[RMDB]
RNA sequence: GGGAACGACUCGAGUAGAGUCGAAAAGUGUCAGUCAAAAGACUCAAUGAGAUGCUGGCCACCCAGCUCAAUUUAGUGCGUGUGAUGCCCAAUACGCCAUCACUGGUAAACCUUGGCAUGAGCGGUAGCUAAUAGUAAAUUUCGAUUUACUAUUAGCAAAAGAAACAACAACAACAAC
Reactivity to 2A3 in 0.01 (KOAc 150mM, MgCl2 10mM, bicine 150mM(pH8.5), 24C), signal-to-noise 9, nucleotides 027 to 126: g100u100g020u020c010a010g020u040c040a040a040a090a120g100a110c020u020c090a060a160u190g020a080g010a110u120g010c010u010g000g000c010c010a030c020c010c000a010g010c010u030c030a040a070u060u150u150a070g010u040g060c040g030u060g020u020g030a020u060g010c000c030c000a030a060u150a070c060g010c020c000a020u040c020a010c040u040g050g020u090a070a070a080c010c020u020u060g040g000c050a040u050g030a020g020c040g040g010u040a030
Reactivity to DMS in 0.01 (KOAc 150mM, MgCl2 10mM, bicine 150mM(pH8.5), 24C), signal-to-noise 9, nucleotides 027 to 126: g020u010g020u000c020a050g010u010c140a080a100a120a110g000a110c030u000c080a100a100u010g010a150g010a100u010g010c010u000g010g010c060c070a150c110c010c020a090g000c030u000c040a050a090u010u000u000a050g020u000g010c040g020u000g010u000g010a050u000g010c030c020c060a070a100u000a090c190g010c120c020a030u000c040a050c050u000g010g010u000a050a070a080c090c040u000u000g010g010c110a070u000g000a070g010c030g010g000u000a100

Chemical mapping of a 177-nucleotide RNA with 2A3 and DMS. 2A3 adducts were read by reverse transcription with SuperScript II with manganese. Conditions: 150 mM KOAc, 10 mM MgCl2 and 150 mM bicine (pH 8.5), 24 C. Source: RMDB library OK2TST, as collected in RNAgym. The 2A3 profile rests on 57,643 reads. Values cover nucleotides 27 to 126. DMS adducts were read by reverse transcription with MarathonRT.